Chemical mapping of a 207-nucleotide RNA with 2A3 and DMS. 2A3 adducts were read by reverse transcription with SuperScript II with manganese. Source: RMDB library OK3TST, as collected in RNAgym. Conditions: 150 mM KOAc, 10 mM MgCl2 and 150 mM bicine (pH 8.5), 24 C.

RNA sequence: GGGAACGACUCGAGUAGAGUCGAAAAAGCGGAGAGCGAACGCAUCAUCGAGACCUGCAGUGAUGCAGUUACCCUCGCAGUGAACGAAGGACGCGUGGUACCGGGAGGUGGUGCUAGCAUGGUAUCGCUUUCGCGAGCGCUGCGGAGCAAAGCCAAAGAAACCACUAUAUUUCGAUAUAGUGGUUUCAAAAGAAACAACAACAACAAC
Reactivity to 2A3 in 0.01 (KOAc 150mM, MgCl2 10mM, bicine 150mM(pH8.5), 24C), signal-to-noise 6, nucleotides 027 to 156: a010g070c050g020g030a070g010a010g060c060g030a030a010c040g020c020a050u030c010a020u070c050g050a030g070a170c030c040u080g000c020a040g010u050g070a040u040g000c030a010g000u040u090a080c010c020c010u010c020g000c040a060g020u030g130a110a050c040g040a110a040g040g030a030c040g010c020g050u060g000g030u050a050c040c040g000g030g010a040g010g030u070g000g010u020g000c030u050a050g040c030a070u130g030g010u120a060u130c030g000c000u050u100u100c070g020c030g030a040g040c060g000c060u070g000c020g030g010a010g020c030a050a080a000g020c020c030a040a080a020
Reactivity to DMS in 0.01 (KOAc 150mM, MgCl2 10mM, bicine 150mM(pH8.5), 24C), signal-to-noise 3, nucleotides 027 to 156: a080g030c000g000g010a080g010a060g030c020g030a060a050c020g030c020a040u000c020a050u000c010g000a130g000a190c250c040u000g020c040a060g000u020g010a120u000g030c010a070g010u000u010a050c040c030c010u000c050g010c040a100g020u020g000a120a080c060g000a100a100g020g000a090c060g030c050g040u020g000g030u000a060c020c010g010g000g010a100g040g020u000g010g010u000g000c020u000a100g020c070a070u000g010g040u010a050u000c040g000c040u000u000u000c040g000c020g010a110g000c080g000c020u000g010c020g000g010a150g010c030a080a060a180g000c010c030a040a130a300